[RMDB]
RNA sequence: GGGAACGACUCGAGUAGAGUCGAAAAUGCCUAACCCUUAUAACCUAAAGGAUAUAAGGUAUGGCUCAUAUCCACUGCGACAUAGAGACGGCGUCUCUACCUACCACAUGUCGCAGUGGUCCUAUCCGAUCUGCAAUUAGUUCGCUAAUUGCAGAUCAAAAGAAACAACAACAACAAC
Reactivity to 2A3 in 0.01 (KOAc 150mM, MgCl2 10mM, bicine 150mM(pH8.5), 24C), signal-to-noise 7, nucleotides 027 to 126: u090g010c000c000u010a020a030c010c000c010u000u000a010u010a020a050c030c050u180a300a170a140g010g000a010u010a010u000a020a000g010g000u010a020u080g010g000c000u010c050a160u170a060u050c000c000a000c000u000g010c010g010a000c000a020u080a020g020a000g000a010c070g210g240c150g080u000c010u000c010u020a060c010c040u080a090c010c060a090c010a160u030g000u000c000g000c000a000g000u000g000g000u000c000c000u060a120u060c040c070
Reactivity to DMS in 0.01 (KOAc 150mM, MgCl2 10mM, bicine 150mM(pH8.5), 24C), signal-to-noise 5, nucleotides 027 to 126: u000g010c000c000u010a080a160c300c000c010u020u000a000u000a020a030c000c010u010a070a060a180g030g020a130u000a020u000a010a010g010g010u000a250u000g000g000c010u000c140a060u000a130u010c000c000a000c000u000g000c000g000a020c010a010u010a020g000a010g000a000c020g010g020c270g000u000c000u000c010u000a050c160c020u000a070c130c070a060c240a030u000g000u010c000g010c010a000g010u000g010g010u000c000c010u000a080u010c130c110

Structure probing data (2A3 and DMS) for a 177-nucleotide construct. The reactions ran in a buffer of 150 mM KOAc, 10 mM MgCl2 and 150 mM bicine (pH 8.5), at 24 C. It was measured as part of the RMDB library RFMREP. For 2A3 the reverse transcriptase was SuperScript II with manganese. For 2A3, 14,535 sequencing reads were counted. The DMS profile rests on 3,530 reads.